[RMDB]
RNA sequence: GGGAACGACUCGAGUAGAGUCGAAAAUGGUACUUCCACACUCUGAUCCGCGAUUACAGCAGAUAGAGGAAGCGCAAGCGGUUAAUGGUUUCGUUGACUGAUCUCGCCAUGCCUCGCAAAUCAACGCGCACGGAUCUCAGGAUUUGAACGGCAUUCAGUUAACCGUAAUAUUCGUAUUACGGUUAACAAAAGAAACAACAACAACAAC
Reactivity to DMS in 0.01 (KOAc 150mM, MgCl2 10mM, bicine 150mM(pH8.5), 24C), signal-to-noise 3, nucleotides 027 to 156: u000g050g020u000a010c030u000u000c020c000a150c130a190c060u000c000u010g010a040u010c020c010g010c040g000a180u010u010a120c110a160g020c020a110g000a090u010a110g000a100g000g010a050a070g000c040g060c060a090a050g020c160g000g030u010u010a020a040u000g030g010u000u000u000c040g030u000u010g010a090c000u000g010a130u000c030u000c030g010c000c050a130u020g020c000c000u010c020g000c070a050a070a110u000c040a020a110c050g020c300g010c050a040c010g010g010a060u000c010u000c020a050g040g000a100u000u000u000g010a040a100c070g010g000c010a300u000u000c050a190
Reactivity to 2A3 in 0.01 (KOAc 150mM, MgCl2 10mM, bicine 150mM(pH8.5), 24C), signal-to-noise 6, nucleotides 027 to 156: u100g000g040u070a070c020u070u040c010c000a040c000a010c040u060c030u040g030a020u010c010c000g020c040g070a090u110u200a120c050a070g000c010a020g030a070u090a050g010a020g010g020a020a040g000c030g000c110a080a020g010c010g010g020u030u020a030a000u020g080g110u060u140u240c040g010u030u030g030a020c010u020g010a120u080c030u050c070g000c020c020a080u210g050c000c010u030c020g050c050a030a110a100u050c020a030a110c080g010c000g010c040a030c060g020g010a030u020c020u030c050a050g060g000a070u050u060u150g040a050a020c010g070g000c060a080u120u130c060a080

This 207-nucleotide RNA was probed chemically with DMS and 2A3. Source: RMDB library OK3TST, as collected in RNAgym. The reactions ran in a buffer of 150 mM KOAc, 10 mM MgCl2 and 150 mM bicine (pH 8.5), at 24 C.